RNA sequence: GGGAACGACUCGAGUAGAGUCGAAAAUGCUAAGGGUUUGAUAUCUGCUAAAACCCGGUGCAUUCAUCAAUGCAGGUUAAGCCAAAGGGAUGUCCUGACCGGAGGCCGACAAUCCAGGGAACCGGAUAAAAGAUUGGUGGGUUCGCCCACCAAUCAACAUUACGAACCUCUUCGGAGGUUCGUAAUGAAAAGAAACAACAACAACAAC
Reactivity to 2A3 in 0.01 (KOAc 150mM, MgCl2 10mM, bicine 150mM(pH8.5), 24C), signal-to-noise 2, nucleotides 027 to 156: u100g000c000u020a020a040g010g000g020u000u010u010g010a010u040a030u040c010u010g020c030u040a080a000a000a000c000c000c000g000g000u030g000c030a060u090u180c030a070u110c070a170a180u150g010c010a000g010g010u000u060a020a020g000c000c010a010a000a020g020g010g000a030u080g050u010c000c010u020g120a020c010c000g000g010a000g020g010c000c000g000a010c000a090a080u060c120c080a040g000g060g060a060a090c130c060g040g000a020u070a120a160a020a020g000a000u020u000g000g010u010g010g020g000u040u070c160g080c020c000c010a000c000c000a000a000u000c010a000a020
Reactivity to DMS in 0.01 (KOAc 150mM, MgCl2 10mM, bicine 150mM(pH8.5), 24C), signal-to-noise 2, nucleotides 027 to 156: u000g020c050u000a300a180g000g000g000u000u000u020g020a130u000a060u010c100u010g000c090u000a190a070a000a050c000c020c000g020g010u000g030c010a050u000u000c040a110u010c030a070a200u020g020c030a050g040g030u000u000a100a050g020c050c010a030a300a300g000g000g030a190u010g020u000c020c040u000g020a160c000c010g010g000a300g020g000c060c010g000a120c070a050a070u000c010c020a030g000g000g000a190a080c070c030g040g000a060u010a120a050a080a180g000a070u010u010g000g020u000g030g000g050u010u000c280g020c010c030c000a060c000c010a000a000u000c000a080a100